[RMDB]
RNA sequence: GGGAACGACUCGAGUAGAGUCGAAAAAUGAGGUCGUACAAUGUGUUGUCAAAUUUUCCGCCUUUAUGACGGUAUGUACGACCUAGAGUAUGUUAGUGAAAAAGGCGGAAAAUACUGGCAUACUCAAGGUUGUCGUAGAUUUCGAUCUGCGACAACCAAAAGAAACAACAACAACAAC
Reactivity to DMS in 0.01 (KOAc 150mM, MgCl2 10mM, bicine 150mM(pH8.5), 24C), signal-to-noise 3, nucleotides 027 to 126: a080u050g010a040g000g010u000c000g020u000a000c000a050a130u040g030u030g020u050u020g000u000c050a060a100a170u010u010u000u000c010c000g000c000c010u000u010u000a060u040g010a040c030g010g000u020a060u000g010u010a000c000g010a020c000c000u000a000g000a010g010u000a000u000g010u010u000a000g000u010g020a050a040a010a040a020g010g010c010g000g000a030a040a040a070u050a020c010u000g000g000c000a000u000a000c000u000c010a130a120
Reactivity to 2A3 in 0.01 (KOAc 150mM, MgCl2 10mM, bicine 150mM(pH8.5), 24C), signal-to-noise 6, nucleotides 027 to 126: a010u260g040a000g000g000u010c010g010u000a000c030a060a090u160g140u110g060u230u190g020u050c010a040a110a150u060u040u000u000c000c000g000c000c020u090u110u050a140u110g030a010c100g090g100u160a070u070g000u000a000c000g000a000c000c000u000a000g000a000g000u000a000u000g020u010u010a020g010u020g200a100a050a040a060a000g000g000c000g010g000a090a000a000a000u030a010c000u000g000g000c000a000u000a010c000u000c000a000a020
Chemical mapping of a 177-nucleotide RNA with DMS and 2A3. Conditions: 150 mM KOAc, 10 mM MgCl2 and 150 mM bicine (pH 8.5), 24 C. For 2A3, 6,478 sequencing reads were counted. It was measured as part of the RMDB library OK1LIB. DMS adducts were read by reverse transcription with MarathonRT.